[RMDB]
RNA sequence: GGGAACGACUCGAGUAGAGUCGAAAAAUAGGCUUAUCAAGAGAGGUGGAGGGACUGGCCCGAUGAAACCCGGCAGCCAGAAAUGGUGCCAAUUCCUGCAGCGGAAACGUUGAAAGAUGAGGCGAUGACAGCGGUUGGUUCGCCAACCGCAAAAGAAACAACAACAACAAC
Reactivity to 2A3 in 0.01 (KOAc 150mM, MgCl2 10mM, bicine 150mM(pH8.5), 24C), signal-to-noise 2, nucleotides 027 to 129: a000u110a060g000g020c000u060u040a050u160c170a160a000g120a000g000a040g040g050u190g040g050a050g000g020g050a000c070u050g000g000c000c000c010g020a070u070g060a060a000a010c040c000c000g000g000c030a030g090c000c020a010g010a000a020a070u090g030g000u010g000c010c020a030a030u010u040c000c000u000g010c020a010g020c000g000g000a080a040a000c000g010u010u000g060a080a100a000g010a000u010g020a010g020g000c030g000a000u060g030a030c030a030
Reactivity to DMS in 0.01 (KOAc 150mM, MgCl2 10mM, bicine 150mM(pH8.5), 24C), signal-to-noise 3, nucleotides 027 to 129: a090u090a040g010g040c010u010u000a020u040c060a040a050g070a160g020a040g030g060u040g050g000a060g100g000g080a000c150u010g010g000c060c000c040g050a000u050g010a050a020a050c140c040c080g000g030c070a060g060c020c000a050g010a130a030a070u000g000g030u030g040c020c060a030a150u070u000c010c020u090g000c020a050g000c040g010g100a070a020a020c030g020u000u020g010a040a070a020g010a100u010g000a100g000g030c020g020a020u040g030a120c000a110

Structure probing data (2A3 and DMS) for a 170-nucleotide construct. The 2A3 profile rests on 3,156 reads. The RNA was probed in 150 mM KOAc, 10 mM MgCl2 and 150 mM bicine (pH 8.5) at 24 C. High 2A3 reactivity points to a flexible backbone, as in loops and unpaired stretches. It was measured as part of the RMDB library 15KLIB. 2A3 adducts were read by reverse transcription with SuperScript II with manganese.